[RMDB]
RNA sequence: GGGAACGACUCGAGUAGAGUCGAAAACUUUCAAAGUCUCAUUGGCUUGCUUUUUAGUACCUACAAACAUGAUGCUUUUGCCUUGAGCGCUCGCAUCGCGCACGAUAUUAUAGGUGUAUCUAAAAUACCAAGGAUGGCAAUUCGUUGCCAUCCUUGGAAAAGAAACAACAACAACAAC
Reactivity to DMS in 0.01 (KOAc 150mM, MgCl2 10mM, bicine 150mM(pH8.5), 24C), signal-to-noise 1, nucleotides 027 to 126: c010u010u020u000c090a090a060a090g030u010c010u000c190a160u010u010g000g010c010u010u000g010c120u010u000u020u000u010a050g020u010a070c010c000u000a050c110a030a050a110c050a080u010g000a020u000g010c030u000u000u000u030g000c000c040u000u000g000a180g010c080g020c060u000c180g000c010a010u000c040g020c120g020c030a090c180g000a090u000a040u000u000a080u000a010g010g000u000g000u000a100u010c020u010a010a010a020a110u000a100
Reactivity to 2A3 in 0.01 (KOAc 150mM, MgCl2 10mM, bicine 150mM(pH8.5), 24C), signal-to-noise 1, nucleotides 027 to 126: c010u010u180u060c060a070a010a000g020u000c030u020c060a070u090u210g000g020c000u010u040g000c010u050u170u000u030u040a030g000u000a020c030c020u030a060c130a050a050a020c030a070u120g010a020u030g020c010u000u110u110u090g070c020c000u140u190g160a190g080c030g050c010u090c030g060c000a010u010c000g010c010g000c020a080c110g060a090u080a010u180u160a130u080a070g090g030u010g010u040a060u000c010u030a120a050a020a060u080a050
Background:
Structure probing data (DMS and 2A3) for a 177-nucleotide construct. 2A3 adducts were read by reverse transcription with SuperScript II with manganese. The data come from the RNA Mapping Database (RMDB), library OK2TST. The 2A3 profile rests on 895 reads. The RNA was probed in 150 mM KOAc, 10 mM MgCl2 and 150 mM bicine (pH 8.5) at 24 C.